[RMDB]
RNA sequence: GGGAACGACUCGAGUAGAGUCGAAAACAUUAUCUCAUUAUUGUGAAGAAACACCACUGUUUUAAAAUUCAGCUUACUGAGAUGUGAGCUUAUGAGGUAUGUGAUUUUUCUUCAACAGAAAUUUGUAGAUACGCCUCAGUUUCGACUGAGGCGUAUCAAAAGAAACAACAACAACAAC
Reactivity to DMS in 0.01 (KOAc 150mM, MgCl2 10mM, bicine 150mM(pH8.5), 24C), signal-to-noise 1, nucleotides 027 to 126: c030a030u050u000a140u030c000u010c030a090u000u000a090u000u020g000u030g030a040a120g000a030a020a030c040a020c100c130a050c030u000g000u000u040u000u110a040a070a160a120u010u000c190a000g000c000u000u000a000c030u000g010a220g020a080u000g000u010g020a000g000c000u000u010a040u000g000a080g030g020u000a010u000g050u000g000a170u000u000u030u000u030c000u030u010c030a060a100c110a080g000a090a000a180u050u000u020g000u030a150
Reactivity to 2A3 in 0.01 (KOAc 150mM, MgCl2 10mM, bicine 150mM(pH8.5), 24C), signal-to-noise 5, nucleotides 027 to 126: c040a040u130u150a120u120c030u000c050a100u040u290a130u170u210g040u040g010a010a070g030a010a050a000c000a000c000c050a010c060u050g130u080u070u110u160a110a240a130a150u070u070c030a010g020c010u000u000a000c000u050g050a010g010a190u120g010u010g010a000g010c000u020u020a090u070g060a030g030g010u120a100u230g040u000g070a120u020u080u010u070u000c000u010u020c020a060a080c030a070g130a120a130a050u140u120u160g130u120a040